[RMDB]
RNA sequence: GGGAACGACUCGAGUAGAGUCGAAAAUGAUAGCUGUUCUUCUAAUUGCAAACAUUCAGUUGCUCAGUUGGUUAGUUACCUUUCUGAACGCUGUAAUGUUAUUGCUGAUUCUAAGUCCUUCACACUUGCGCGAAGUACUUCGGUACUUCGAAAAGAAACAACAACAACAAC
Reactivity to DMS in 0.01 (KOAc 150mM, MgCl2 10mM, bicine 150mM(pH8.5), 24C), signal-to-noise 8, nucleotides 027 to 129: u070g000a100u040a080g010c070u040g020u020u020c050u030u040c080u010a060a080u000u000g030c020a040a020a050c000a040u020u010c030a010g040u020u080g040c070u020c000a000g000u010u000g010g020u010u020a070g040u060u050a110c000c000u060u040u020c000u030g000a000a000c030g030c010u000g000u050a010a010u020g020u020u030a070u040u020g020c030u000g040a070u000u000c060u000a050a060g020u040c030c030u010u020c080a040c060a080c050u030u050g020c100g010
Reactivity to 2A3 in 0.01 (KOAc 150mM, MgCl2 10mM, bicine 150mM(pH8.5), 24C), signal-to-noise 9, nucleotides 027 to 129: u180g040a070u070a040g040c080u040g060u110u030c010u060u000c020u050a070a050u130u080g000c010a000a030a030c000a020u000u000c010a000g030u110u210g270c010u000c000a010g000u020u020g040g010u020u060a040g030u100u200a060c010c000u040u120u100c000u010g000a020a010c010g000c010u030g070u300a020a010u010g010u010u050a080u060u060g000c020u040g040a070u050u010c020u050a050a010g030u020c010c010u070u120c050a060c020a030c090u090u170g030c120g010
An RNA of 170 nucleotides, treated with DMS and 2A3 and read out base by base. The 2A3 profile rests on 82,053 reads. Source: RMDB library 15KLIB, as collected in RNAgym. The RNA was probed in 150 mM KOAc, 10 mM MgCl2 and 150 mM bicine (pH 8.5) at 24 C. DMS adducts were read by reverse transcription with MarathonRT.